RNA sequence: GGGAACGACUCGAGUAGAGUCGAAAAUUAUCUUUGUUCUUCCAGUAUAUCCUCUUGCUAAUUUUAUAGCAGCAUCUAUACAAGCAGAACCAGUUGCACUGUAUAGUACUUUUUUAUCAUUAUCUCCGCCACUGGAUACUUUCGAGUAUCCAGUGGCAAAAGAAACAACAACAACAAC
Reactivity to 2A3 in 0.01 (KOAc 150mM, MgCl2 10mM, bicine 150mM(pH8.5), 24C), signal-to-noise 2, nucleotides 027 to 126: u170u080a090u210c090u210u070u220g050u050u050c020u040u100c000c010a090g140u070a010u000a080u090c000c010u100c090u140u070g000c030u040a000a300u080u240u040u110a200u090a040g040c120a030g020c010a040u000c010u010a000u020a030c000a060a000g000c000a040g040a080a150c060c030a050g150u150u010g080c040a040c070u080g010u030a010u000a080g070u030a040c030u000u140u090u010u060u080a070u180c040a100u020u050a030u000c020u000c000c000